The data come from the RNA Mapping Database (RMDB), library OK2TRN.
An RNA of 177 nucleotides, treated with DMS and 2A3 and read out base by base.
Reactivities are given for positions 27 through 126.
For DMS, 1,102 sequencing reads were counted.
For 2A3 the reverse transcriptase was SuperScript II with manganese.

RNA sequence: GGGAACGACUCGAGUAGAGUCGAAAACGACGCUGCGCAAGCGCAACGGCAUUACCAAGGUGCUGAUCCUGGACAUGCCGAUCAACACCUUUUGGGACAUCGGCCGCAGCGAUGGCUGCGCCAUCUGCGGGGCUAUCAGGUUCGCCUGAUAGCCCCGAAAAGAAACAACAACAACAAC
Reactivity to DMS in 0.01 (KOAc 150mM, MgCl2 10mM, bicine 150mM(pH8.5), 24C), signal-to-noise 2, nucleotides 027 to 126: c060g000a120c040g000c000u000g000c080g010c080a100a070g000c020g070c040a070a080c040g000g030c000a070u010u000a150c030c000a060a000g010g000u000g000c000u000g020a010u000c010c110u040g030g020a280c260a120u010g000c050c060g000a000u020c000a020a010c050a000c000c000u000u000u000u000g040g010g010a180c300a030u020c110g000g020c060c030g020c050a110g000c010g010a090u000g000g000c000u010g030c030g000c000c040a020u010c060u020g000
Reactivity to 2A3 in 0.01 (KOAc 150mM, MgCl2 10mM, bicine 150mM(pH8.5), 24C), signal-to-noise 2, nucleotides 027 to 126: c050g100a000c030g000c010u100g000c070g020c130a150a090g090c040g000c020a040a050c000g030g030c020a020u000u150a070c010c000a030a000g020g000u010g000c010u010g030a010u030c060c140u180g030g050a090c100a240u200g070c050c010g000a010u000c000a010a010c040a000c000c000u020u090u150u130g030g000g020a050c040a110u100c170g070g020c030c010g010c040a000g000c050g070a100u060g080g000c000u020g040c020g020c000c020a120u080c050u150g070